[RMDB]
RNA sequence: GGGAACGACUCGAGUAGAGUCGAAAAGACGUGGAGGUCUCGCGCCCUCCUUUGCGCGUAAGUACGUCGAAAUUCGGUGCUCUGGAUCGCACCGUCUGAUCCAUUAGAUAUCCGCUCUGUGCCGCGGUUGGGCAUUUACACUUACCCGAAAGGGGAAAUGCUAAUUAUCCUUCGGGAUAAUUAGCAUAAAAGAAACAACAACAACAAC
Reactivity to 2A3 in 0.01 (KOAc 150mM, MgCl2 10mM, bicine 150mM(pH8.5), 24C), signal-to-noise 2, nucleotides 027 to 156: g020a000c030g000u040g040g060a030g000g030u000c030u040c060g010c000g020c000c000c040u100c020c060u070u080u180g020c030g000c020g070u010a040a040g040u040a070c030g020u020c040g070a130a000a000u110u060c010g000g000u030g010c000u010c010u100g130g060a120u090c040g010c000a040c060c000g020u000c020u050g040a030u040c000c010a030u040u110a030g080a130u090a080u110c060c010g030c000u010c040u090g080u040g030c000c070g000c030g050g000u080u030g030g000g000c000a020u040u050u140a040c020a040c020u070u140a040c020c030c020g040a110a030a040g000g000g000g000a010a120
Reactivity to DMS in 0.01 (KOAc 150mM, MgCl2 10mM, bicine 150mM(pH8.5), 24C), signal-to-noise 2, nucleotides 027 to 156: g000a060c050g030u010g020g020a100g000g040u010c010u000c120g070c140g070c190c020c010u000c080c040u000u010u010g040c060g040c030g000u000a050a180g020u000a050c030g040u000c040g010a070a070a140u010u000c030g030g040u000g010c030u000c110u010g000g040a090u010c090g000c040a110c050c040g000u000c010u020g010a090u000c010c030a120u000u000a060g020a130u000a090u000c060c040g070c010u000c040u000g000u000g020c030c040g050c010g010g020u000u010g000g010g050c060a070u000u010u000a110c110a060c100u000u000a230c000c010c030g020a120a080a150g010g010g000g010a020a040
Structure probing data (2A3 and DMS) for a 207-nucleotide construct. Reactivities are rounded to 0.1 and cut off at 0 and 3. Values cover nucleotides 27 to 156. 2A3 adducts were read by reverse transcription with SuperScript II with manganese.